Source information
The record gives the reactivity of an RNA of 177 nucleotides to DMS and 2A3. The 2A3 profile rests on 3,456 reads. Values are in units of 0.01, from 0 to 300, in steps of 10. For DMS the reverse transcriptase was MarathonRT.

[RMDB]
RNA sequence: GGGAACGACUCGAGUAGAGUCGAAAACUUGGGCACUUCGGUGCCCAAGAAACGCUCAACCUCAGAGCGCAAAAGUCGAACGUAUACAGUUCGACAUGAGGAAAACGGACCCGUUCGCGGGUCCGAACAACCCAUUAAACUUCGGUUUAAUGGGUUGAAAAGAAACAACAACAACAAC
Reactivity to DMS in 0.01 (KOAc 150mM, MgCl2 10mM, bicine 150mM(pH8.5), 24C), signal-to-noise 2, nucleotides 027 to 126: c000u000u000g000g020g010c020a000c000u000u000c140g050g030u000g020c000c000c000a000a000g010a070a090a290c010g040c000u010c010a050a040c020c000u000c000a010g000a020g010c000g040c060a070a090a050a010g020u000c000g010a020a000c000g010u040a190u020a110c170a140g000u000u000c000g000a000c000a000u000g010a010g000g000a120a070a100a210c020g000g000a010c000c000c000g010u000u000c160g010c020g020g000g040u000c010c000g000a030a080
Reactivity to 2A3 in 0.01 (KOAc 150mM, MgCl2 10mM, bicine 150mM(pH8.5), 24C), signal-to-noise 1, nucleotides 027 to 126: c010u000u000g000g000g030c000a020c010u030u040c220g100g000u000g000c000c000c010a000a000g010a000a000a010c000g000c000u000c010a100a060c000c000u010c010a000g010a000g000c000g000c090a300a230a000a000g000u010c000g000a020a000c000g030u050a080u110a300c120a080g000u000u000c000g010a000c000a000u000g010a000g030g000a000a000a000a070c000g000g000a000c000c010c000g030u050u040c160g000c020g080g000g020u000c000c000g000a010a000